[RMDB]
RNA sequence: GGGAACGACUCGAGUAGAGUCGAAAAAGCUCGGUGAAAUUGUAGUAUCGGUGAAGAUGCCGGUUACCCGCUACGGGACGAAAAGACCCCGUGAACCUUUACUAUAGCUUCGCAUUGGUAUUGGAUAUAGAAGAAGACUAUUCGUAGUCUUCUUCUAAAAAGAAACAACAACAACAAC
Reactivity to 2A3 in 0.01 (KOAc 150mM, MgCl2 10mM, bicine 150mM(pH8.5), 24C), signal-to-noise 8, nucleotides 027 to 126: a000g110c060u060c040g060g000u050g020a050a060a110u080u040g030u040a030g010u020a010u030c030g000g030u060g060a100a060g090a060u140g060c080c010g010g000u080u110a070c010c010c010g010c010u020a030c010g000g010g020a020c040g070a040a080a080a120g110a070c020c000c000c000g000u010g030a020a030c010c000u010u030u020a020c010u010a000u020a050g010c020u050u060c030g010c020a120u020u110g030g020u080a080u040u070g060g040a070u060a010
Reactivity to DMS in 0.01 (KOAc 150mM, MgCl2 10mM, bicine 150mM(pH8.5), 24C), signal-to-noise 9, nucleotides 027 to 126: a090g000c030u000c090g010g010u000g010a020a050a040u010u000g010u000a020g010u000a010u000c070g000g020u000g000a120a120g000a100u020g020c110c030g020g010u020u030a100c130c010c030g010c090u010a040c030g010g000g010a080c050g000a090a070a120a150g000a160c130c010c000c010g000u010g000a150a050c010c000u000u000u000a020c010u000a010u000a060g010c060u000u000c040g010c030a140u020u000g010g010u010a080u010u010g010g000a100u020a120

This 177-nucleotide RNA was probed chemically with 2A3 and DMS. Source: RMDB libraries RFM100 and RFMREP, as collected in RNAgym.